Annotation:
This 177-nucleotide RNA was probed chemically with DMS. Source: RMDB library OK2TRN, as collected in RNAgym.
RNA sequence: GGGAACGACUCGAGUAGAGUCGAAAAUAUCUGAUUACCUAUGGCAAUGGAGGGUCCAACUCCAGUAUCUGCAUUAAUUCACGCAGCUACAAUGGUUACAGCGGGAGUUUAUUUAUUAAUACGUUCAAAUUGCAAUUUGGUUCGCCAAAUUGCAAUUAAAAGAAACAACAACAACAAC
Reactivity to DMS in 0.01 (KOAc 150mM, MgCl2 10mM, bicine 150mM(pH8.5), 24C), signal-to-noise 2, nucleotides 027 to 126: u020a070u000c060u020g020a120u000u000a150c030c020u000a150u010g010g020c060a090a150u020g000g010a020g010g000g020u000c050c060a140a100c040u000c010c000a060g000u000a020u000c050u010g010c030a090u000u000a080a110u010u000c240a070c120g030c010a030g010c030u000a010c000a130a060u000g000g020u000u000a060c090a030g010c080g000g020g000a100g020u010u000u000a030u010u010u010a070u000u000a030a090u010a090c110g000u000u000c060a040